[RMDB]
RNA sequence: GGGAACGACUCGAGUAGAGUCGAAAAGAUAUGGACUGUGGCUUCCUCCUGUGGCGUUGAAAUCGGAAACGAUGGAGCCACCUGAGGAAACCACAGUCCUAAGUCAAAAUCGUCCUUCGGGACGAAACCAUUUAGUUAACUUCGGUUAACUAAAUGGAAAAGAAACAACAACAACAAC
Reactivity to 2A3 in 0.01 (KOAc 150mM, MgCl2 10mM, bicine 150mM(pH8.5), 24C), signal-to-noise 5, nucleotides 027 to 126: g020a020u070a040u150g000g000a000c000u010g000u010g000g010c010u020u010c000c000u010c000c010u020g000u000g000g000c030g240u300u050g010a030a030a000u010c010g000g010a050a050a050c020g000a010u020g000g000a010g000c000c000a000c010c000u000g000a000g000g020a000a000a000c000c000a010c000a000g000u000c000c010u000a000a000g000u000c000a000a000a000a240u040c000g000u000c000c000u020u070c300g090g000g000a000c000g000a060a020a010
Reactivity to DMS in 0.01 (KOAc 150mM, MgCl2 10mM, bicine 150mM(pH8.5), 24C), signal-to-noise 6, nucleotides 027 to 126: g000a040u000a300u010g010g000a000c000u000g010u000g010g000c020u000u000c010c000u000c000c030u000g010u000g000g010c010g010u000u010g000a100a130a030u000c000g010g010a110a110a210c010g010a010u000g000g010a140g020c000c000a000c000c020u000g010a020g010g000a010a000a010c000c000a010c000a000g010u000c000c000u000a000a060g010u000c040a080a070a120a120u000c000g010u000c000c000u000u010c190g010g010g010a010c000g000a010a050a140